This 177-nucleotide RNA was probed chemically with 2A3 and DMS. For 2A3, 72,361 sequencing reads were counted. The DMS profile rests on 44,113 reads.
RNA sequence: GGGAACGACUCGAGUAGAGUCGAAAAGAUAUGGAAUACAGACGUGGCGAGACAAUGAUGUCGGAAACGAUUGAGUCUCGAACUACCACGGCUGUAUUCCUAAGUCAAAGCGUAGUUCGCUACGCAACAUAACAAUGGAGUUCGCUCCAUUGUUAUGAAAAGAAACAACAACAACAAC
Reactivity to 2A3 in 0.01 (KOAc 150mM, MgCl2 10mM, bicine 150mM(pH8.5), 24C), signal-to-noise 9, nucleotides 027 to 126: g010a010u050a020u100g000g000a010a000u000a000c000a000g020a000c000g010u010g010g010c010g000a010g010a010c030a090a300u300g100a080u300g080u020c010g010g020a040a050a010c010g010a010u020u140g060a050g020u000c000u000c000g010a030a010c060u150a060c010c010a000c000g000g000c000u000g000u000a000u000u000c000c000u000a000a000g000u000c030a080a080a020g000c000g000u010a010g020u050u110c300g000c130u000a000c010g000c000a010a010
Reactivity to DMS in 0.01 (KOAc 150mM, MgCl2 10mM, bicine 150mM(pH8.5), 24C), signal-to-noise 9, nucleotides 027 to 126: g000a030u010a300u000g000g000a020a010u000a000c010a010g000a010c000g030u000g000g010c010g000a010g010a010c000a170a120u010g010a110u010g010u000c010g000g000a080a060a150c010g010a010u000u000g000a130g010u000c000u000c000g000a030a020c090u010a300c030c010a000c000g000g000c000u000g010u000a010u000u000c000c000u000a010a050g000u000c020a100a070a100g010c010g010u000a010g010u000u010c280g030c010u000a010c000g010c000a090a150
The reactions ran in a buffer of 150 mM KOAc, 10 mM MgCl2 and 150 mM bicine (pH 8.5), at 24 C. Source: RMDB library TTRDEL, as collected in RNAgym.